[RMDB]
An RNA of 177 nucleotides, treated with DMS and read out base by base. For DMS the reverse transcriptase was MarathonRT. The RNA was probed in 150 mM KOAc, 10 mM MgCl2 and 150 mM bicine (pH 8.5) at 24 C.
RNA sequence: GGGAACGACUCGAGUAGAGUCGAAAAAUGAGGAGGGUGACUGAAGCCUGCUCGGUCAGAGCGAACCCGUAACAGCGAACAACAUCGUUCGUUUCUCCCGUCAAGCCGCCCCCGUGGCUGCCUGACAGACUUGAUAACUCUUCGGAGUUAUCAAGUCAAAAGAAACAACAACAACAAC
Reactivity to DMS in 0.01 (KOAc 150mM, MgCl2 10mM, bicine 150mM(pH8.5), 24C), signal-to-noise 1, nucleotides 027 to 126: a060u010g000a110g010g000a230g000g000g020u000g010a160c070u000g010a110a190g000c040c040u000g000c000u000c040g000g000u000c170a170g020a070g000c060g000a050a010c040c000c040g010u010a090a060c230a050g030c030g010a010a010c000a070a120c200a060u010c150g020u000u000c010g020u020u010u000c040u000c020c050c080g010u000c010a030a030g000c000c140g000c010c000c010c180c300g010u040g020g010c010u000g000c000c010u000g000a010c030a210